Source information
The record gives the reactivity of an RNA of 207 nucleotides to DMS and 2A3. The 2A3 profile rests on 1,340 reads. The reactions ran in a buffer of 150 mM KOAc, 10 mM MgCl2 and 150 mM bicine (pH 8.5), at 24 C. High 2A3 reactivity points to a flexible backbone, as in loops and unpaired stretches. The data come from the RNA Mapping Database (RMDB), library OK3TST. Values are in units of 0.01, from 0 to 300, in steps of 10.
[RMDB]
RNA sequence: GGGAACGACUCGAGUAGAGUCGAAAAAUAUACGAAUGAUAAAAAUGACGUGUGAUCAAGGAUUGUAUGGAUUCUUGUAGGGUUAAUCUGGACAUAUUCUCACUCAUCAAGUAAAAACACAUACAGACAGAACCGGUCAAAGAACACCUACGUGUGAAAAUCCUAUCAGAUUCGUCUGAUAGGAUUUAAAAGAAACAACAACAACAAC
Reactivity to DMS in 0.01 (KOAc 150mM, MgCl2 10mM, bicine 150mM(pH8.5), 24C), signal-to-noise 2, nucleotides 027 to 156: a120u010a050u000a180c020g030a110a100u000g020a170u000a020a080a100a120a130u010g000a100c030g020u000g020u000g030a100u000c030a130a070g000g000a070u000u000g000u000a100u000g010g010a090u000u000c020u000u010g000u000a100g020g030g020u000u000a040a050u000c030u000g010g000a070c060a090u000a060u000u020c030u000c020a090c070u010c030a100u000c100a040a060g020u010a020a030a040a040a040c020a060c050a060u000a090c020a040g020a070c050a120g010a120a100c020c010g050g020u000c040a090a050a100g010a080a080c020a030c000c010u000a070c090g010u020g010u040g000a110
Reactivity to 2A3 in 0.01 (KOAc 150mM, MgCl2 10mM, bicine 150mM(pH8.5), 24C), signal-to-noise 2, nucleotides 027 to 156: a000u090a000u040a010c050g040a040a120u180g040a020u160a110a110a080a040a030u120g080a010c040g030u060g010u050g060a040u160c030a070a020g030g010a030u020u070g000u060a090u060g040g020a020u040u030c000u090u050g040u080a110g020g000g010u020u040a070a010u070c060u080g050g030a040c020a000u160a040u140u060c070u020c030a030c060u060c000a120u060c010a040a060g000u130a060a090a040a060a000c030a020c010a020u080a040c000a000g030a020c010a020g060a080a000c020c050g100g000u000c020a190a000a050g030a090a020c000a030c030c060u160a000c110g020u110g020u040g070a010